The record gives the reactivity of an RNA of 177 nucleotides to DMS. Reactivities are given for positions 27 through 126.
RNA sequence: GGGAACGACUCGAGUAGAGUCGAAAACUGGCCAGGGCCACGCUGGAAUCCAUCGCCUACCAGACCCGCGACGUGGUCGAGGCCAUGCAGCGCGACUCCGGUGUGCGGCUGGCGACGCUGCGGGUCAGACGGUAGGAUGAUUCGUCAUCCUACCGUCAAAAGAAACAACAACAACAAC
Reactivity to DMS in 0.01 (KOAc 150mM, MgCl2 10mM, bicine 150mM(pH8.5), 24C), signal-to-noise 3, nucleotides 027 to 126: c170u010g020g010c000c010a040g010g010g000c010c020a010c020g020c020u010g020g010a210a080u010c050c070a040u000c140g030c020c030u000a140c150c150a180g020a060c020c010c010g040c040g010a090c020g000u000g010g040u000c030g000a150g020g010c010c010a020u010g000c040a020g000c000g020c070g000a070c050u010c130c110g010g000u000g020u000g000c040g020g040c010u000g000g010c010g000a080c030g010c030u000g050c000g000g000g000u000c050a130
Source information: It was measured as part of the RMDB library OK2TST. DMS (dimethyl sulfate) methylates the pairing face of unpaired adenines and cytosines. The DMS profile rests on 3,022 reads. For DMS the reverse transcriptase was MarathonRT.